Source: RMDB library ARCHII, as collected in RNAgym. This 207-nucleotide RNA was probed chemically with DMS and 2A3. For DMS, 1,738 sequencing reads were counted. DMS adducts were read by reverse transcription with MarathonRT. The reactions ran in a buffer of 150 mM KOAc, 10 mM MgCl2 and 150 mM bicine (pH 8.5), at 24 C. For 2A3 the reverse transcriptase was SuperScript II with manganese. For 2A3, 969 sequencing reads were counted.

[RMDB]
RNA sequence: GGGAACGACUCGAGUAGAGUCGAAAAUUCAUGAACCAUGUCAGGUCCGGAAGGAAGCAGCAUUAAGUGAAACCUCUCAUGUGCCGCAGGGUUGCCUGGGCCGAGCUAACUGCUUAAGUAACGCUUAGGGUAGCGAAUCGACAGAAGGUGCACGGUACGUGCUAUCAGUCUUCGGACUGAUAGCACGAAAAGAAACAACAACAACAAC
Reactivity to DMS in 0.01 (KOAc 150mM, MgCl2 10mM, bicine 150mM(pH8.5), 24C), signal-to-noise 1, nucleotides 027 to 156: u000u000c020a090u010g040a140a170c020c040a190u000g040u010c060a120g000g010u000c000c070g000g000a110a090g000g000a040a120g000c010a110g010c040a060u000u000a050a130g040u000g000a090a030a050c030c030u000c060u000c030a150u010g010u000g000c000c040g000c060a090g030g010g000u010u000g010c010c020u010g040g060g000c000c030g000a070g040c040u000a030a030c070u020g010c000u000u030a010a070g060u000a060a130c160g010c010u000u000a050g010g040g050u000a110g020c000g000a100a100u000c030g010a030c000a070g020a060a120g020g030u000g010c010a100c050g020g010u000a090
Reactivity to 2A3 in 0.01 (KOAc 150mM, MgCl2 10mM, bicine 150mM(pH8.5), 24C), signal-to-noise 2, nucleotides 027 to 156: u150u040c020a030u090g050a030a020c020c020a080u070g050u090c040a010g000g020u010c020c000g070g090a060a100g050g040a010a000g000c020a000g050c000a020u050u130a110a010g040u050g040a090a060a090c040c000u030c000u000c020a050u080g080u150g050c000c010g090c050a050g020g140g040u170u150g070c020c020u000g020g000g020c040c000g000a000g010c010u060a060a020c040u060g060c020u160u030a050a030g020u040a100a010c050g020c090u030u040a010g070g000g000u070a050g060c020g050a070a040u140c040g000a030c040a050g020a000a000g010g030u030g010c010a020c020g040g010u070a010